An RNA of 177 nucleotides, treated with DMS and 2A3 and read out base by base. It was measured as part of the RMDB library VIROID. The reactions ran in a buffer of 150 mM KOAc, 10 mM MgCl2 and 150 mM bicine (pH 8.5), at 24 C.

RNA sequence: GGGAACGACUCGAGUAGAGUCGAAAAGCAACGGGGCUAGCCGGUGGGUGUUCCGCCCCCCGAGAGGGCACGAGUGAGGCUUAUCCCGGGGAACUCGACUUAUCGUCCCCACAUAGCAGAGCCCGGAGGUAUACUCUAGGUUCGCCUAGAGUAUACCAAAAGAAACAACAACAACAAC
Reactivity to DMS in 0.01 (KOAc 150mM, MgCl2 10mM, bicine 150mM(pH8.5), 24C), signal-to-noise 1, nucleotides 027 to 126: g010c100a140a130c040g040g000g020g020c090u010a120g020c020c090g000g030u000g000g000g010u000g000u000u000c060c130g000c060c050c000c010c000c010g000a050g010a060g010g000g020c030a060c030g020a100g000u000g010a080g000g000c010u000u010a120u000c010c010c010g010g000g000g000a040a030c090u020c060g000a060c120u000u000a130u010c110g000u000c050c000c010c000a080c140a110u000a080g000c070a090g000a160g000c000c010c010g000g020a150
Reactivity to 2A3 in 0.01 (KOAc 150mM, MgCl2 10mM, bicine 150mM(pH8.5), 24C), signal-to-noise 1, nucleotides 027 to 126: g120c020a060a070c060g030g020g020g020c000u000a030g030c000c000g000g030u060g010g060g000u130g150u210u000c070c020g060c000c000c010c010c000c010g010a040g000a010g030g030g000c030a010c130g040a090g160u270g070a200g120g020c030u020u140a220u210c040c010c010g020g020g000g000a020a010c030u040c070g020a020c030u160u160a110u220c060g000u000c020c000c030c010a040c010a040u110a010g060c070a050g000a020g170c000c000c000g080g040a010